[RMDB]
RNA sequence: GGGAACGACUCGAGUAGAGUCGAAAAGCUCCGGCUAACCAAAGGGAGCGAAGACAUGUGGGUACGAACCCGACCACUUGUCGAUUAGCAGCUUGACGGCCGUGAGGAACUCCGUCUUGCUGCGAAAGGGAUGCAGGUCGUUCGCGACUUGCAUCCCAAAAGAAACAACAACAACAAC
Reactivity to 2A3 in 0.01 (KOAc 150mM, MgCl2 10mM, bicine 150mM(pH8.5), 24C), signal-to-noise 6, nucleotides 027 to 126: g000c000u000c000c010g100g070c090u170a140a090c090c040a210a090a050g080g000g000a000g010c060g010a130a020g000a000c000a000u020g010u020g010g030g050u190a060c080g080a080a080c020c030c010g000a050c000c010a000c000u000u000g020u010c010g010a010u060u060a010g010c000a000g000c000u000u020g000a000c000g040g000c090c050g050u100g080a100g060g100a060a060c050u020c020c000g000u000c000u000u010g000c000u000g000c000g020a040a000a000
Reactivity to DMS in 0.01 (KOAc 150mM, MgCl2 10mM, bicine 150mM(pH8.5), 24C), signal-to-noise 3, nucleotides 027 to 126: g000c020u000c000c020g040g020c120u030a090a120c280c290a120a080a240g000g010g010a000g040c000g010a100a060g010a000c000a000u010g000u020g000g000g000u010a070c160g000a080a080c010c010c000g000a030c000c010a000c010u000u020g000u000c000g000a090u020u050a120g000c000a010g020c000u010u000g010a000c010g000g000c090c120g000u020g010a130g020g020a240a020c030u030c010c000g010u000c000u000u000g000c020u000g010c000g000a000a120a100
Structure probing data (2A3 and DMS) for a 177-nucleotide construct. The data come from the RNA Mapping Database (RMDB), library OK1LIB. The RNA was probed in 150 mM KOAc, 10 mM MgCl2 and 150 mM bicine (pH 8.5) at 24 C. The DMS profile rests on 6,027 reads.